Structure probing data (DMS and 2A3) for a 177-nucleotide construct. Conditions: 150 mM KOAc, 10 mM MgCl2 and 150 mM bicine (pH 8.5), 24 C. As a SHAPE reagent, 2A3 marks flexible, mostly unpaired nucleotides at the ribose 2'-OH. Source: RMDB library OK1LIB, as collected in RNAgym. DMS adducts were read by reverse transcription with MarathonRT.

RNA sequence: GGGAACGACUCGAGUAGAGUCGAAAACACGACCAGCCGGGCCGCUCCACGACGGACACCGUGCUGCGCUUUCUUGGCGGGCGUCCAGCCCUGGUGGUGCUGGAUAACUGCGAGCACCUGCUGGAUGGAUCCUCUGAAAGUUCGCUUUCAGAGGAUCAAAAGAAACAACAACAACAAC
Reactivity to DMS in 0.01 (KOAc 150mM, MgCl2 10mM, bicine 150mM(pH8.5), 24C), signal-to-noise 2, nucleotides 027 to 126: c080a180c130g000a190c100c030a010g000c030c050g000g000g030c110c080g000c010u000c110c090a040c060g000a100c050g000g050a070c110a020c060c000g000u010g020c020u000g000c030g000c020u000u010u030c090u010u010g010g000c050g020g020g000c140g000u000c010c010a010g020c000c050c050u050g000g000u050g010g010u030g000c020u000g010g000a040u010a020a130c070u000g000c180g000a040g000c040a050c010c000u040g000c010u010g020g040a140u000g000
Reactivity to 2A3 in 0.01 (KOAc 150mM, MgCl2 10mM, bicine 150mM(pH8.5), 24C), signal-to-noise 7, nucleotides 027 to 126: c060a010c030g060a070c000c010a000g010c010c030g030g020g020c090c040g010c030u030c030c030a050c030g070a010c000g030g060a080c030a050c090c010g090u090g010c010u120g030c000g000c010u110u160u100c070u120u120g050g020c020g030g000g020c020g030u010c030c020a020g000c030c020c030u070g100g070u170g030g020u150g010c010u010g000g030a050u070a080a080c030u060g010c060g050a010g000c010a070c030c000u010g000c000u000g000g000a010u010g090